[RMDB]
RNA sequence: GGGAACGACUCGAGUAGAGUCGAAAAGGCGAAGUCCACCAUCACUGCGAUGUUUGCUGUGUGGUCUCUGAUCCAGAAUCCGAAAUGCCGUGUGGUCAUCGUGUCCGCAGGCGAAGGCACUGCCAACGAGAUUGCCACGCUGGUGAAGAACCUGAUCACAGAGAUAGGGAUUCGUCCCUAUCUCUGUAAAAGAAACAACAACAACAAC
Reactivity to 2A3 in 0.01 (KOAc 150mM, MgCl2 10mM, bicine 150mM(pH8.5), 24C), signal-to-noise 5, nucleotides 027 to 156: g060g000c110g080a100a050g060u040c030c000a000c010c000a100u160c050a020c040u070g040c060g070a190u120g120u160u050u200g060c040u010g030u020g010u040g050g010u020c040u000c000u070g040a040u000c060c020a020g040a040a060u030c020c010g050a050a030a080u230g000c010c000g030u020g010u010g030g040u040c060a100u020c050g060u040g030u190c050c050g020c000a010g020g030c060g040a050a060g130g000c080a080c190u030g010c020c020a040a010c010g020a040g010a170u040u130g000c000c000a010c030g000c090u160g010g000u040g010a010a010g010a030a040c020c040u050g020a050u170c080
Reactivity to DMS in 0.01 (KOAc 150mM, MgCl2 10mM, bicine 150mM(pH8.5), 24C), signal-to-noise 2, nucleotides 027 to 156: g030g020c030g000a100a070g000u000c020c040a060c070c000a210u010c050a070c060u000g010c030g010a160u010g030u020u000u000g000c020u000g060u000g040u000g020g050u010c030u010c040u000g000a080u000c040c040a130g020a130a140u000c050c020g030a110a050a070u010g030c020c000g010u000g030u000g020g020u030c200a130u000c040g010u010g000u000c030c180g000c000a030g000g020c030g000a080a090g020g010c050a160c000u010g020c010c000a050a010c020g010a070g020a100u000u010g020c000c020a090c000g040c000u000g030g040u010g010a130a090g010a070a150c060c010u030g000a150u000c000

Source: RMDB library OK3TST, as collected in RNAgym. This 207-nucleotide RNA was probed chemically with 2A3 and DMS. For DMS, 3,908 sequencing reads were counted. 2A3 adducts were read by reverse transcription with SuperScript II with manganese.